[RMDB]
RNA sequence: GGGAACGACUCGAGUAGAGUCGAAAAGUCUGAAAGAAUGCUGCUAGGAGGGGCGUCCGAACCAUGCCUGCUGCCUCCUGUGGCUACAGGGCGUGACUGCCAUCUGCUCCAACUUUGCUCAUUCCGAGGUUACAUGAGGGUUCGCCCUCAUGUAACCAAAAGAAACAACAACAACAAC
Reactivity to 2A3 in 0.01 (KOAc 150mM, MgCl2 10mM, bicine 150mM(pH8.5), 24C), signal-to-noise 2, nucleotides 027 to 126: g050u010c040u080g080a090a070a030g050a070a010u060g000c030u020g000c060u140a040g030g000a000g000g030g020g000c000g020u090c070c020g030a070a050c030c000a040u120g030c030c030u060g000c020u120g130c000c000u040c050c000u060g060u080g030g010c010u000a010c020a010g040g080g000c000g010u020g030a050c020u060g110c030c010a040u040c050u120g020c000u030c000c010a070a130c040u070u070u120g030c030u040c030a050u010u040c030c010g090a040
Reactivity to DMS in 0.01 (KOAc 150mM, MgCl2 10mM, bicine 150mM(pH8.5), 24C), signal-to-noise 2, nucleotides 027 to 126: g000u000c050u000g000a110a100a080g010a080a050u000g000c100u000g000c020u000a020g020g010a210g030g010g000g010c010g010u000c090c060g020a030a070c270c090a060u020g000c000c000u000g030c100u010g020c010c000u000c190c120u000g050u000g020g010c010u020a040c080a070g010g000g010c020g010u000g000a120c070u000g010c070c030a100u020c050u020g000c040u000c030c020a040a180c050u000u000u030g010c050u000c070a140u000u010c000c010g000a300